[RMDB]
RNA sequence: GGGAACGACUCGAGUAGAGUCGAAAAAUAUCAUUAUUAUUCUGUUCAUUAGAAUGCAGUUAUAAUGGUAAGAUACAGAUAUAAUGGUAAUAUUUGCUGUUAUUAGCUGAUAUCGAAUGAAUCAUAAGCCUCGUAGUAUAUUCGUAUACUACGAGGCAAAAGAAACAACAACAACAAC
Reactivity to DMS in 0.01 (KOAc 150mM, MgCl2 10mM, bicine 150mM(pH8.5), 24C), signal-to-noise 2, nucleotides 027 to 126: a100u000a010u020c000a010u000u020a000u000u010a020u000u000c020u010g000u010u020c040a140u030u030a140g010a050a070u010g010c140a060g020u000u000a030u000a000a020u000g000g010u000a040a090g000a030u030a000c020a040g000a110u010a030u000a010a040u000g000g000u030a060a160u050a200u030u030u000g010c000u000g000u010u050a000u020u020a100g000c020u000g000a080u000a030u000c000g010a030a070u000g000a030a180u050c020a090u020a010a250
Reactivity to 2A3 in 0.01 (KOAc 150mM, MgCl2 10mM, bicine 150mM(pH8.5), 24C), signal-to-noise 2, nucleotides 027 to 126: a010u060a000u060c030a010u000u040a000u060u110a010u110u120c000u020g010u150u120c090a120u080u060a090g160a170a090u300g030c000a010g000u000u020a000u000a000a000u000g000g000u080a100a030g000a030u030a020c000a000g000a000u000a000u010a020a020u000g040g010u020a120a130u120a300u220u190u100g000c000u000g000u040u020a030u020u090a050g110c020u010g030a160u000a010u030c080g060a090a120u170g090a040a040u220c030a060u150a270a000

This 177-nucleotide RNA was probed chemically with DMS and 2A3. The DMS profile rests on 2,404 reads. DMS adducts were read by reverse transcription with MarathonRT. It was measured as part of the RMDB library OK1LIB.